Source: RMDB library OK3TST, as collected in RNAgym. Structure probing data (2A3 and DMS) for a 207-nucleotide construct.

RNA sequence: GGGAACGACUCGAGUAGAGUCGAAAAUCAAAUAUAUUUAUCUGAUUAUGAUAACAUAAAAAUAUCAUUGAAUGAGAUACUAACACAUUUCAACAAUAAUGAGAAUGUUACAUUAUUUUAUUGUGAUGAACGAGACGCAGAAUUCGUUAUGUGUCUAUAAUAAUCACCUAUUCGUAGGUGAUUAUUAAAAAGAAACAACAACAACAAC
Reactivity to 2A3 in 0.01 (KOAc 150mM, MgCl2 10mM, bicine 150mM(pH8.5), 24C), signal-to-noise 2, nucleotides 027 to 156: u070c000a050a060a030u190a030u100a100u210u160u070a070u020c000u020g080a060u000u200a020u060g000a000u020a070a010c000a010u270a250a070a030a060a030u030a010u020c010a000u000u190g040a010a050u040g000a040g000a000u070a080c070u130a120a040c020a000c000a080u060u090u060c030a030a060c010a030a060u070a030a020u040g010a020g060a230a080u090g010u210u100a020c010a030u030u030a010u010u070u010u030a040u080u080g030u010g010a090u030g000a070a030c050g020a040g000a030c000g000c030a010g050a150a060u190u160c030g030u100u060a090u100g010u000g020u000c000u020a040
Reactivity to DMS in 0.01 (KOAc 150mM, MgCl2 10mM, bicine 150mM(pH8.5), 24C), signal-to-noise 2, nucleotides 027 to 156: u010c010a010a060a060u000a100u000a110u050u000u000a080u000c010u010g010a140u000u000a120u000g000a190u000a060a090c000a130u010a010a080a080a090a190u000a050u010c000a060u010u010g000a100a120u000g000a060g010a060u000a100c190u010a070a090c090a130c060a080u000u000u000c010a020a090c030a110a130u000a060a080u010g010a060g000a110a040u000g000u000u000a080c050a050u000u000a040u010u000u000u010a060u000u000g030u000g000a060u000g000a070a090c150g000a120g000a020c060g000c070a050g030a120a130u010u010c110g000u010u000a110u010g020u000g020u010c000u000a170
For DMS the reverse transcriptase was MarathonRT. For 2A3 the reverse transcriptase was SuperScript II with manganese. The DMS profile rests on 3,251 reads. Conditions: 150 mM KOAc, 10 mM MgCl2 and 150 mM bicine (pH 8.5), 24 C.